[RMDB]
RNA sequence: GGGAACGACUCGAGUAGAGUCGAAAAUGGAAUACCACAUCGGGAUCAUCAAAUAAUUCCAGGUCAAUACCCGGUCAAGGGCACGCCCCAGAGAGAGUAAGGCCUCUGGUUGAUCCUGAUGGCUGAAGAGUAAAUAAUUAUUCGUAAUUAUUUACUCAAAAGAAACAACAACAACAAC
Reactivity to DMS in 0.01 (KOAc 150mM, MgCl2 10mM, bicine 150mM(pH8.5), 24C), signal-to-noise 6, nucleotides 027 to 126: u000g010g010a150a090u010a180c060c080a130c020a010u000c010g010g010g000a010u000c010a030u000c100a060a070a160u000a070a120u010u010c040c040a130g020g000u000c060a140a140u000a060c010c010c000g000g010u000c140a100a130g010g000g010c050a060c260g010c060c000c000c010a070g010a090g000a130g000a070g000u010a080a180g010g000c100c020u000c060u000g000g010u000u000g020a010u000c000c010u000g010a010u000g000g000c130u010g000a090a120
Reactivity to 2A3 in 0.01 (KOAc 150mM, MgCl2 10mM, bicine 150mM(pH8.5), 24C), signal-to-noise 5, nucleotides 027 to 126: u080g040g050a070a050u060a150c030c030a040c020a030u000c000g030g010g010a000u010c010a000u030c030a020a090a200u160a090a080u250u030c030c030a020g000g000u010c020a080a080u060a120c000c000c010g020g130u130c080a100a120g020g000g000c060a040c100g040c020c010c000c010a010g020a000g000a000g000a010g070u080a070a020g050g030c010c000u010c060u050g050g010u030u040g000a000u000c000c000u000g000a000u010g000g000c050u070g040a120a040